Chemical mapping of a 207-nucleotide RNA with 2A3 and DMS. For 2A3, 1,354 sequencing reads were counted.

[RMDB]
RNA sequence: GGGAACGACUCGAGUAGAGUCGAAAACAUAAGCAGCUGCACUGCGAUGCCCAGUCUAGAAAAUCUUUCAGCUGUAAAUACUGUGACAAGGAAUAUGUGAGCCUGGGCGCCCUGAAGAUGCAUAUUCGGACCCACACAUUACCUUGUGUUUGCAAGACGAGCAUAAAUGGUUCGCCAUUUAUGCUCGAAAAGAAACAACAACAACAAC
Reactivity to 2A3 in 0.01 (KOAc 150mM, MgCl2 10mM, bicine 150mM(pH8.5), 24C), signal-to-noise 3, nucleotides 027 to 156: c030a060u200a110a130g030c000a010g000c020u060g040c070a050c090u080g030c020g050a060u100g020c010c020c020a000g040u030c020u060a060g120a100a140a090a150u040c060u000u080u030c010a030g020c000u040g040u080a010a060a070u150a070c080u060g070u040g110a000c020a000a020g010g040a150a030u040a000u110g040u030g000a060g070c020c040u010g010g000g000c010g130c040c000c000u070g020a030a020g050a060u270g060c080a100u120a150u110u100c000g010g040a130c000c000c000a010c000a000c000a010u000u080a060c000c000u020u010g020u020g000u070u130u090g050c010a080a000g080a030
Reactivity to DMS in 0.01 (KOAc 150mM, MgCl2 10mM, bicine 150mM(pH8.5), 24C), signal-to-noise 1, nucleotides 027 to 156: c050a120u000a080a260g030c010a030g040c010u000g020c100a300c000u000g020c030g000a110u000g010c000c020c020a190g010u010c020u000a100g000a110a070a110a090u000c060u000u010u010c000a060g090c070u000g000u010a080a130a090u000a070c060u000g000u020g010a010c050a040a030g000g010a060a020u000a030u000g020u000g010a000g000c000c000u010g010g020g020c100g030c000c000c000u000g010a080a140g020a090u000g010c000a210u000a140u000u010c020g000g080a060c020c030c000a010c010a020c050a040u000u000a110c020c030u020u000g030u000g060u050u000u000g010c040a050a150g010a280
2A3 adducts were read by reverse transcription with SuperScript II with manganese. DMS adducts were read by reverse transcription with MarathonRT. As a SHAPE reagent, 2A3 marks flexible, mostly unpaired nucleotides at the ribose 2'-OH. It was measured as part of the RMDB library OK3TST.